[RMDB]
RNA sequence: GGGAACGACUCGAGUAGAGUCGAAAAGCUUUUUUUUCGGAUUAGGCGUGGAGGCGAAAGUCACCCUCCUCGCAUCGCAAGUUCGUGCUUGCGACUUACACGUAGGGCGAGGGGAGGGCGAAAGUUGAAAACACGAUGUUGUUCGCAACAUCGUGAACAUGUGUAGUGGGUUCGCCCACUACACAUGAAAAGAAACAACAACAACAAC
Reactivity to 2A3 in 0.01 (KOAc 150mM, MgCl2 10mM, bicine 150mM(pH8.5), 24C), signal-to-noise 3, nucleotides 027 to 156: g010c010u110u030u060u050u040u030u060u130c130g070g010a180u160u120a090g010g010c040g020u030g010g010a010g000g000c110g080a150a070a030g100u110c030a060c000c010c000u000c020c010u020c000g000c010a010u000c010g000c000a000a010g000u230u300c230g050u300g080c010u000u000g000c000g000a000c000u000u110a030c130a030c100g070u070a050g020g010g070c110g020a030g000g030g000g010a120g030g020g020c010g070a090a040a000g020u070u090g040a070a080a060a020c000a000c010g010a000u000g000u020u000g030u090u040c210g000c060a000a000c000a010u000c000g000u010g000a000a000